[RMDB]
RNA sequence: GGGAACGACUCGAGUAGAGUCGAAAAUCCUCUUGUUUCAGCAGGCAUAUUUGGUGUAAAACCAGCUGUGUCUUUUGAUUAUCUUAUUAGGGAGGCUAAGACUAGAGUUUUAGUCGUCGUUAAUUCCGAUAUUCUAAUCCUUCGGGAUUAGAAUAUCAAAAGAAACAACAACAACAAC
Reactivity to 2A3 in 0.01 (KOAc 150mM, MgCl2 10mM, bicine 150mM(pH8.5), 24C), signal-to-noise 3, nucleotides 027 to 126: u000c010c010u010c050u080u190g110u030u030u010c010a020g000c010a000g000g020c020a000u030a020u000u040u030g060g000u040g040u120a140a190a020a020c000c000a000g000c030u010g010u010g000u010c000u050u030u030u030g030a030u000u180a090u060c050u060u080a090u030u040a050g070g050g020a010g000g000c010u010a010a000g000a010c010u080a100g030a070g300u010u040u000u010a010g000u000c040g140u010c030g300u040u020a040a010u160u000c040c030
Reactivity to DMS in 0.01 (KOAc 150mM, MgCl2 10mM, bicine 150mM(pH8.5), 24C), signal-to-noise 4, nucleotides 027 to 126: u010c010c000u000c260u010u000g010u000u000u000c010a040g020c100a020g000g010c010a010u000a020u000u000u000g010g000u000g000u010a090a100a160a030c000c010a010g000c080u000g020u000g000u010c010u000u000u000u000g000a030u000u010a070u010c090u010u000a070u000u000a030g000g000g010a080g000g010c000u000a010a010g010a000c000u010a150g010a190g010u000u000u000u000a010g010u000c000g000u000c010g000u000u000a020a030u000u010c210c110
An RNA of 177 nucleotides, treated with 2A3 and DMS and read out base by base. The data come from the RNA Mapping Database (RMDB), library 15KREP. For 2A3 the reverse transcriptase was SuperScript II with manganese.